[RMDB]
RNA sequence: GGGAACGACUCGAGUAGAGUCGAAAAACACAGCAAAGCCAUCUAUGAAGCUACCGAACGAGCCCUUGACCACGUAGGCUGGGACCGUCAUAGAGCUGGCUCCGACGAGGAAGGGCAAGAUAAUAACCACUAGCGUAGCUUUCGAGCUACGCUAGUGAAAAGAAACAACAACAACAAC
Reactivity to DMS in 0.01 (KOAc 150mM, MgCl2 10mM, bicine 150mM(pH8.5), 24C), signal-to-noise 3, nucleotides 027 to 126: a080c070a050c100a100g020c090a030a100a070g020c040c010a120u000c060u000a080u020g010a080a080g000c070u000a090c050c040g000a110a060c120g010a160g010c000c010c000u000u000g000a130c010c030a100c170g000u000a110g020g000c100u010g010g000g010a020c030c070g010u010c060a090u010a070g010a080g020c090u000g000g010c030u010c040c050g000a130c050g000a060g000g010a050a040g000g020g030c060a040a080g010a060u010a060a090u000a100a120c200
Reactivity to 2A3 in 0.01 (KOAc 150mM, MgCl2 10mM, bicine 150mM(pH8.5), 24C), signal-to-noise 2, nucleotides 027 to 126: a000c060a010c000a000g000c030a090a090a000g030c000c010a020u020c060u060a070u070g040a060a000g000c030u100a060c040c010g090a110a070c030g040a050g000c010c020c030u070u070g100a220c000c040a060c110g140u090a040g000g070c040u010g030g030g030a020c000c010g030u010c010a040u060a050g060a070g070c090u050g000g030c010u010c020c040g120a110c030g010a020g040g020a020a050g000g000g000c010a030a030g000a040u150a210a010u050a110a040c020